[RMDB]
RNA sequence: GGGAACGACUCGAGUAGAGUCGAAAAAAGGGACAGUUAGUUGAUGGGCAGUGAAGAUCAUCUGUUUCCCAGAGAGAGAAGCAUUCAGAGUGAAGGGAUCUGUGUGAUGUGCCCCAUUCAUUCUUUGAGCUGGGGCUCUAGCUGGUGUGUGCACUCCCGGCAGUAUGGAAUUCGUUCCAUACUGCCGAAAAGAAACAACAACAACAAC
Reactivity to 2A3 in 0.01 (KOAc 150mM, MgCl2 10mM, bicine 150mM(pH8.5), 24C), signal-to-noise 2, nucleotides 027 to 156: a010a000g050g010g000a050c040a030g020u070u080a050g000u080u120g070a090u050g020g030g000c050a050g020u030g120a060a040g030a100u090c030a010u020c050u030g050u060u080u050c000c010c010a020g010a000g000a000g000a000g000a050a010g020c020a040u070u100c020a010g050a040g090u080g050a040a040g020g010g020a040u010c070u040g040u020g040u060g090a080u150g020u060g010c000c010c000c000a000u020u040c000a020u040u060c120u130u170u050g040a050g030c080u040g020g010g000g000c010u000c000u010a000g000c000u030g050g000u030g000u020g020u040g090c030a010c070u050c000c030
Reactivity to DMS in 0.01 (KOAc 150mM, MgCl2 10mM, bicine 150mM(pH8.5), 24C), signal-to-noise 2, nucleotides 027 to 156: a080a030g010g000g020a030c040a080g020u000u000a080g010u000u010g010a090u000g010g010g010c040a100g020u000g010a060a080g040a090u000c010a040u000c040u010g000u000u000u010c010c020c040a180g010a150g000a130g000a080g020a070a080g000c040a090u020u000c030a050g020a180g020u000g010a050a090g010g000g000a050u000c070u000g000u000g020u000g000a090u010g000u010g020c000c010c020c000a040u000u010c030a070u010u000c130u000u000u000g000a060g010c170u000g020g010g040g030c000u010c040u020a090g020c040u010g020g010u000g020u000g000u010g020c020a060c030u000c010c020

This 207-nucleotide RNA was probed chemically with 2A3 and DMS. The RNA was probed in 150 mM KOAc, 10 mM MgCl2 and 150 mM bicine (pH 8.5) at 24 C. For DMS the reverse transcriptase was MarathonRT. The data come from the RNA Mapping Database (RMDB), library OK3TST.